[RMDB]
RNA sequence: GGGAACGACUCGAGUAGAGUCGAAAACAGGUUGUCGAAGAUAGACACGCCCAAUGAAACCAGCGCCAGGCUGUGCAGCGGCAGGAAGAUAUCACCAACACCGCUUGGGGAUGCAUCAUUCCACAUAGUAUUCCCUGGUAUUCGUACCAGGGAAUACAAAAGAAACAACAACAACAAC
Reactivity to 2A3 in 0.01 (KOAc 150mM, MgCl2 10mM, bicine 150mM(pH8.5), 24C), signal-to-noise 2, nucleotides 027 to 126: c030a020g040g050u130u070g000u060c030g040a200a090g060a270u190a070g020a010c010a010c040g040c000c000c020a010a050u140g070a060a020a060c050c020a010g020c000g050c040c050a020g100g000c040u080g030u100g060c000a010g070c030g050g010c020a020g030g030a040a020g040a040u080a030u050c050a020c010c000a000a040c070a040c050c080g100c150u020u020g000g000g010g000a010u040g010c020a040u010c000a060u080u040c020c000a040c040a140u190a060
Reactivity to DMS in 0.01 (KOAc 150mM, MgCl2 10mM, bicine 150mM(pH8.5), 24C), signal-to-noise 4, nucleotides 027 to 126: c140a080g020g010u000u000g010u000c020g010a110a130g030a150u020a120g000a050c040a030c070g000c010c010c020a100a080u020g000a130a140a110c110c010a060g010c040g040c080c080a060g000g000c030u000g030u000g020c070a040g020c070g000g000c060a070g000g010a060a060g000a090u000a030u000c020a080c020c000a040a050c090a160c180c210g030c100u000u000g000g000g000g000a030u000g000c130a050u010c050a090u000u000c010c000a060c220a080u000a090